An RNA of 207 nucleotides, treated with 2A3 and read out base by base.
RNA sequence: GGGAACGACUCGAGUAGAGUCGAAAAAGUCACCUAUUACGAUAGGUGACAUUUGAACCAGCGAACAAUUCAGUUGCGAGAUUCGAGGUUUCAGUCUGAAUCAUAGUAUCCAUUACGAUGGCUACAACUCACUCCCGACUGUUCGCAGUCGGGAGAAGCUCUCUUAGCAGUUCGCUGCUAAGAGAGCAAAAGAAACAACAACAACAAC
Reactivity to 2A3 in 0.01 (KOAc 150mM, MgCl2 10mM, bicine 150mM(pH8.5), 24C), signal-to-noise 2, nucleotides 027 to 156: a000g000u000c000a000c000c000u000a000u020u050a060c200g030a000u000a010g000g000u010g000a000c000a000u010u000u120g030a020a010c020c000a020g150c010g000a000a000c030a100a110u010u000c000a010g000u000u000g010c000g000a000g000a000u010u000c010g010a030g000g050u130u180u300c040a030g110u050c000u000g000a010a000u020c010a080u050a070g010u000a020u000c000c010a000u020u080a030c270g120a040u020g000g030c010u020a020c050a130a090c020u090c200a030c020u000c000c000c000g000a000c000u010g040u080u060c300g020c050a000g000u000c000g000g000g000a000g010a000a000
The 2A3 profile rests on 1,270 reads. It was measured as part of the RMDB library M2RFPK.